[RMDB]
The data come from the RNA Mapping Database (RMDB), library OK1LIB. Structure probing data (2A3 and DMS) for a 177-nucleotide construct. Values are in units of 0.01, from 0 to 300, in steps of 10. For DMS the reverse transcriptase was MarathonRT. The DMS profile rests on 1,495 reads.

RNA sequence: GGGAACGACUCGAGUAGAGUCGAAAAAACUUUGUGCACGACUUCACAGUUGCUCAUCUCACCAAGUCCACUGACUCUCGAUUUUCGGAGGCCUUUCCCUUAAUUGGAGAUGGUUUUGAUGGACACACGAAGUGAUGCGUUUCGACGCAUCACUUCGAAAAGAAACAACAACAACAAC
Reactivity to 2A3 in 0.01 (KOAc 150mM, MgCl2 10mM, bicine 150mM(pH8.5), 24C), signal-to-noise 4, nucleotides 027 to 126: a000a000c110u130u070u040g020u020g040c070a040c100g100a070c050u090u080c060a030c010a080g020u060u100g010c010u010c090a090u040c020u020c010a040c040c010a120a010g000u000c000c010a000c020u030g010a050c000u030c000u010c050g050a080u020u000u030u100c030g100g010a020g080g020c020c020u090u180u030c020c000c000u050u060a110a050u100u050g130g020a060g040a080u040g100g060u040u040u020u050g100a140u030g000g020a000c000a010c000a000
Reactivity to DMS in 0.01 (KOAc 150mM, MgCl2 10mM, bicine 150mM(pH8.5), 24C), signal-to-noise 1, nucleotides 027 to 126: a080a070c040u010u010u040g010u000g000c190a110c040g030a030c080u000u000c060a080c230a110g000u030u000g000c020u000c090a160u040c030u000c140a030c030c040a050a080g000u000c010c030a020c020u030g000a080c000u000c000u010c010g000a050u000u020u050u000c180g010g010a040g000g000c090c140u000u000u040c000c000c000u040u000a110a060u080u000g000g000a030g020a110u060g000g000u000u000u000u020g030a040u000g000g000a080c030a190c160a080